[RMDB]
RNA sequence: GGGAACGACUCGAGUAGAGUCGAAAAUAACGUCGCAGCUCACCACCGCCUGACCAUUCUGCCAGGAGAUAACGGUUGCCCACUCUUUAAUCAUUGUACUGCCCUGAAUUUGAUACUGUCGGCAAUGAGAUACCUCCGAAUUCGUUCGGAGGUAUCUAAAAGAAACAACAACAACAAC
Reactivity to 2A3 in 0.01 (KOAc 150mM, MgCl2 10mM, bicine 150mM(pH8.5), 24C), signal-to-noise 4, nucleotides 027 to 126: u110a050a030c050g000u020c030g010c040a050g020c010u040c030a060c010c000a030c020c030g010c010c000u030g050a070c000c030a030u030u060c020u070g020c010c000a020g010g030a030g040a060u140a090a040c040g030g030u020u030g000c000c000c000a050c030u020c000u060u080u040a080a060u060c020a030u010u050g040u050a070c030u030g010c000c020c000u050g080a170a110u070u030u060g060a110u090a140c020u070g040u110c020g000g010c010a010a060u080g010
Reactivity to DMS in 0.01 (KOAc 150mM, MgCl2 10mM, bicine 150mM(pH8.5), 24C), signal-to-noise 3, nucleotides 027 to 126: u040a070a100c160g020u000c050g060c070a070g000c060u000c020a110c030c030a090c040c020g000c030c050u010g020a090c050c070a080u020u000c030u010g030c050c020a090g000g010a080g000a070u020a050a100c090g000g000u010u000g000c020c000c020a060c060u020c020u000u000u030a060a100u010c070a050u000u000g010u010a080c070u010g000c000c040c010u000g010a040a100u030u030u000g000a070u020a100c060u000g010u000c040g000g010c070a020a060u020g000
Record summary
Conditions: 150 mM KOAc, 10 mM MgCl2 and 150 mM bicine (pH 8.5), 24 C. Structure probing data (2A3 and DMS) for a 177-nucleotide construct. For DMS the reverse transcriptase was MarathonRT.